[RMDB]
RNA sequence: GGGAACGACUCGAGUAGAGUCGAAAACGCAUGCGUACUCGUGACGGUGCGGCUUCGUUGGUUUGGGUCUGUCGCGGUUGGCCCUGUCUGACGGGUCAGGGCUUGUUCAUGCAGGUCUGUGAGUGCGGGAGCAUGAUGCCUUCGGGUAUCAUGCUCCAAAAGAAACAACAACAACAAC
Reactivity to 2A3 in 0.01 (KOAc 150mM, MgCl2 10mM, bicine 150mM(pH8.5), 24C), signal-to-noise 1, nucleotides 027 to 126: c030g030c010a010u220g100c000g000u010a020c010u050c070g170u270g070a010c020g010g030u010g030c010g050g000c000u120u080c020g060u010u050g020g060u060u070u140g050g000g030u060c040u060g060u000c050g030c020g090g050u030u010g030g000c000c010c000u000g030u000c040u050g070a020c010g020g000g060u040c040a030g010g000g030c020u000u040g010u070u090c040a030u070g010c030a010g010g000u010c000u030g030u000g040a040g020u070g000c040g000
Reactivity to DMS in 0.01 (KOAc 150mM, MgCl2 10mM, bicine 150mM(pH8.5), 24C), signal-to-noise 2, nucleotides 027 to 126: c060g000c020a020u010g020c050g010u000a030c030u060c150g000u020g010a020c010g000g000u000g000c010g010g000c070u000u050c070g070u010u020g000g000u020u020u010g010g020g000u010c040u010g030u010c090g020c060g010g000u030u010g010g000c000c020c000u010g000u010c040u010g020a150c150g010g010g000u000c020a020g000g010g020c000u000u010g000u010u020c060a050u000g010c000a020g000g020u000c010u000g010u020g000a120g000u010g000c040g010